[RMDB]
RNA sequence: GGGAACGACUCGAGUAGAGUCGAAAAGAAAGAAAGAAAGCCCUCCGGCUGGGUCGGACGGUCUGGUGCGCUUGAUGUGUUUUCGGUACCAUCGCACAUCAGGCUGAACGACUCAGAGGAGUGGCAAGAGUAUGCUAAAGUUCGCUUUAGCAUACUCAAAAGAAACAACAACAACAAC
Reactivity to DMS in 0.01 (KOAc 150mM, MgCl2 10mM, bicine 150mM(pH8.5), 24C), signal-to-noise 4, nucleotides 027 to 126: g000a070a110a080g000a150a090a120g010a120a160a190g010c000c000c000u000c000c000g000g020c010u000g000g000g010u010c000g000g000a270c000g020g010u000c000u010g000g000u000g010c050g000c010u020u020g010a000u010g000u030g010u000u000u020u020c220g010g010u060a010c010c010a000u010c020g010c000a010c000a000u000c000a010g000g000c000u000g010a030a240c000g010a010c000u000c010a020g010a300g000g000a020g010u010g010g000c010a010a020
Reactivity to 2A3 in 0.01 (KOAc 150mM, MgCl2 10mM, bicine 150mM(pH8.5), 24C), signal-to-noise 9, nucleotides 027 to 126: g110a010a050a010g120a030a110a010g080a050a080a020g000c020c000c000u000c020c020g300g090c010u000g000g000g000u000c000g010g010a010c000g000g000u000c000u000g000g010u000g000c020g000c060u190u260g000a000u000g250u030g070u080u020u070u180c140g100g050u050a010c000c000a000u000c010g000c000a010c000a010u010c000a000g000g000c000u000g000a000a000c000g000a000c000u000c000a000g000a000g000g000a000g020u260g000g000c000a000a000